[RMDB]
RNA sequence: GGGAACGACUCGAGUAGAGUCGAAAAGCAUGUUUCGACAUGCCUCUCAGAUAUGGAUCCGGAGAAGAGCUUGGAUUUACAGGAGAAAUCGGAAACGAUUUCUUCCUGUUGUCAGCUCGUAACGGAUCCUAAGUCCUAGCGCGAUCUUCGGAUCGAAACACUAUCAGAUUUUCGAAUCUGAUAGUGUAAAAGAAACAACAACAACAAC
Reactivity to DMS in 0.01 (KOAc 150mM, MgCl2 10mM, bicine 150mM(pH8.5), 24C), signal-to-noise 3, nucleotides 027 to 156: g000c000a010u000g010u000u010u010c290g020a150c020a040u010g000c010c010u000c020u010c040a240g020a150u000a220u000g010g000a020u000c010c000g000g000a190g020a170a260g010a000g010c010u000u000g050g020a070u000u010u000a010c000a030g000g010a060g000a010a020a000u000c010g100g000a240a130a300c010g030a020u000u010u000c000u010u000c030c010u000g020u000u000g000u000c010a050g050c010u000c020g030u010a100a290c030g010g010a010u000c000c000u000a030a060g000u000c000c010u000a130g020c110g000c020g010a030u000c020u000u000c230g040g000a040u010c000g060a120a210
Reactivity to 2A3 in 0.01 (KOAc 150mM, MgCl2 10mM, bicine 150mM(pH8.5), 24C), signal-to-noise 8, nucleotides 027 to 156: g000c000a000u010g020u040u200u220c270g120a030c010a000u000g010c020c000u020c000u000c010a060g040a080u070a040u210g000g000a000u000c000c010g030g010a020g000a030a010g010a000g010c050u180u230g150g010a060u300u300u170a000c000a000g000g010a010g000a000a000a000u000c010g000g060a060a050a060c010g010a000u030u010u000c010u100u150c000c000u000g000u000u000g000u000c000a000g000c000u000c000g000u000a000a000c000g000g000a000u000c000c000u000a000a000g000u000c000c030u060a050g120c110g010c020g090a010u010c000u050u070c250g120g000a000u000c010g020a040a060